[RMDB]
RNA sequence: GGGAACGACUCGAGUAGAGUCGAAAAAAAAAUUGCGUAAUCGACAUUGAGAAUGUACGCUAAGUGUGUGUUGGAUACCUAACGUCCAAUUGAACACACACACAGUUGGACCUAAUGUCGAAAAAAAGAGAUAAAUGUGGUUCGCCACAUUUAUCUCAAAAGAAACAACAACAACAAC
Reactivity to DMS in 0.01 (KOAc 150mM, MgCl2 10mM, bicine 150mM(pH8.5), 24C), signal-to-noise 1, nucleotides 027 to 126: a040a020a070a070a040u000u000g010c080g010u000a070a070u000c000g010a020c000a030u000u000g000a040g000a090a050u000g010u000a050c000g010c020u010a050a150g040u000g000u000g010u000g020u000u000g010g010a070u000a110c170c120u010a050a110c210g000u000c000c000a040a070u010u000g010a050a020c070a000c000a030c020a000c000a010c140a090g000u000u020g020g000a070c010c040u000a020a010u000g010u000c000g010a000a000a100a040a020a100a090
Reactivity to 2A3 in 0.01 (KOAc 150mM, MgCl2 10mM, bicine 150mM(pH8.5), 24C), signal-to-noise 3, nucleotides 027 to 126: a000a000a000a000a000u140u090g030c020g040u060a040a050u040c010g010a000c000a020u030u070g030a020g060a200a160u110g010u050a020c010g030c010u040a170a200g000u020g000u000g000u010g020u040u090g020g000a010u040a120c050c050u110a120a060c090g000u010c000c010a030a010u060u100g130a090a000c000a000c000a000c000a000c000a010c010a030g110u240u160g040g020a000c000c000u000a010a000u020g010u020c000g020a100a010a000a000a000a000a030